[RMDB]
This 177-nucleotide RNA was probed chemically with DMS and 2A3. DMS (dimethyl sulfate) methylates the pairing face of unpaired adenines and cytosines. 2A3 adducts were read by reverse transcription with SuperScript II with manganese. Values are in units of 0.01, from 0 to 300, in steps of 10.

RNA sequence: GGGAACGACUCGAGUAGAGUCGAAAACUGGUUGUCUUUUUAUCCCUCCUCUCUGAGACGCUGCGCUGUUCAAAGAAACUUGACUUUGAGACCCUUCCAACCUACGUACUUCGCCAUCGAUAUUUGUACGUUGCCAUACUUUCGAGUAUGGCAACGUAAAAGAAACAACAACAACAAC
Reactivity to DMS in 0.01 (KOAc 150mM, MgCl2 10mM, bicine 150mM(pH8.5), 24C), signal-to-noise 1, nucleotides 027 to 126: c060u010g000g020u000u000g000u030c040u000u000u000u030u000a040u050c010c020c040u010c040c010u000c030u030c030u010g000a100g010a050c020g010c010u010g000c050g080c060u000g000u000u000c070a040a020a020g000a140a110a140c060u010u020g030a110c010u010u000u000g000a040g020a080c050c000c010u000u000c020c150a050a100c080c000u030a070c050g020u000a070c010u000u000c040g040c050c000a000u000c080g000a060u000a090u000u000u000g010u020
Reactivity to 2A3 in 0.01 (KOAc 150mM, MgCl2 10mM, bicine 150mM(pH8.5), 24C), signal-to-noise 2, nucleotides 027 to 126: c000u020g050g020u000u020g030u000c070u000u180u050u050u140a100u080c000c000c000u040c000c000u050c000u030c010u050g070a010g000a070c020g000c040u050g010c000g000c030u010g020u080u030c040a100a040a030g020a040a050a040c040u040u100g040a050c000u030u060u060g050a050g040a030c000c010c000u040u040c000c030a020a010c020c000u110a040c010g000u000a040c020u020u020c040g020c030c020a070u100c020g070a030u010a120u170u090u100g030u010